[RMDB]
RNA sequence: GGGAACGACUCGAGUAGAGUCGAAAACACCAGAUGUUCGCAUCUGGUGAAAUACUCAAAAGCCGUAAGAGAACGGCAAACACACGGCAGUGAAAGCCGAAAAAACUAGCCGGUUCGCCGGCUAGAAGAAUCAGUGAUUGUUCGCAAUCACUGAUUCAAAAGAAACAACAACAACAAC
Reactivity to DMS in 0.01 (KOAc 150mM, MgCl2 10mM, bicine 150mM(pH8.5), 24C), signal-to-noise 2, nucleotides 027 to 126: c020a040c020c010a000g040a000u020g020u000u000c140g050c010a010u000c000u000g000g020u010g010a000a040a120u010a120c020u000c040a070a060a120a180g020c000c010g010u000a100a110g020a140g010a100a050c000g030g000c010a060a050a100c050a060c150a070c020g010g000c010a050g000u010g020a060a080a140g000c040c010g010a000a050a050a060a120a100c000u000a020g000c000c000g030g010u010u000c260g030c000c000g010g000c000u010a000g000a000a060
Reactivity to 2A3 in 0.01 (KOAc 150mM, MgCl2 10mM, bicine 150mM(pH8.5), 24C), signal-to-noise 2, nucleotides 027 to 126: c000a000c000c000a000g000a010u010g030u080u080c230g030c140a000u000c010u000g000g000u010g000a000a000a000u050a010c000u020c050a110a010a090a010g000c010c010g020u070a180a020g150a030g040a300a000c000g000g000c010a010a040a000c060a010c020a010c030g000g000c000a030g030u050g300a170a010a030g020c020c070g070a140a030a000a000a010a000c000u000a000g000c000c000g000g050u010u010c170g010c060c000g000g120c010u000a000g000a000a000

Notes:
The record gives the reactivity of an RNA of 177 nucleotides to DMS and 2A3. Source: RMDB library M2PK50, as collected in RNAgym.